[RMDB]
RNA sequence: GGGAACGACUCGAGUAGAGUCGAAAACUGCGCUCCCCUGCUAGAACCUCCAAACAAGCUCUCAAGGUCCAUUUGUAGGAGAACGUAGGGUAGUCAAGCUUCCAAGACUCCAGACACAUCCAAAUGAGUUAGUGGUAUGGUUCGCCAUACCACUAACAAAAGAAACAACAACAACAAC
Reactivity to DMS in 0.01 (KOAc 150mM, MgCl2 10mM, bicine 150mM(pH8.5), 24C), signal-to-noise 1, nucleotides 027 to 126: c050u000g000c050g000c040u000c010c000c020c180u000g060c000u000a230g030a160a180c050c040u000c060c130a110a080a030c100a080a190g040c070u000c010u000c050a210a070g020g000u000c080c080a190u030u000u000g070u000a030g010g000a040g000a050a200c200g050u020a040g040g000g020u000a020g000u020c080a030a070g000c030u000u000c030c030a130a060g040a010c020u030c000c000a090g000a100c050a100c080a030u000c020c070a010a070a150u000g010a180